The record gives the reactivity of an RNA of 207 nucleotides to 2A3. Values cover nucleotides 27 to 156. Conditions: 150 mM KOAc, 10 mM MgCl2 and 150 mM bicine (pH 8.5), 24 C. It was measured as part of the RMDB library OK3TST.

RNA sequence: GGGAACGACUCGAGUAGAGUCGAAAAACACACGAGUGAUCACGAACGAUCACACGUACGUGUGUUCGUGAUCGAACGAGAGAACUCGAUCGAUCGAGUGUACGAUCGUACACACACUCUCACGUGUGAUCGAACACACGUACACACGAACGUACACUCUCGGGAGAAUCUUCGGAUUCUCCCGAGAAAAAGAAACAACAACAACAAC
Reactivity to 2A3 in 0.01 (KOAc 150mM, MgCl2 10mM, bicine 150mM(pH8.5), 24C), signal-to-noise 1, nucleotides 027 to 156: a000c180a000c060a000c070g030a090g080u000g000a030u000c000a060c300g260a240a070c050g030a030u000c000a000c030a070c030g000u000a000c000g000u010g000u000g000u030u000c000g000u050g000a030u000c000g030a000a010c000g000a000g000a000g060a020a090c110u020c070g070a090u070c020g030a140u080c000g010a170g010u150g030u050a080c010g080a300u150c260g010u060a050c030a000c000a000c000a020c030u110c000u000c070a070c230g040u070g010u000g010a010u030c000g000a000a000c000a000c000a000c010g000u040a000c010a000c000a000c000g070a120a040c010g000u050a030c020a000c140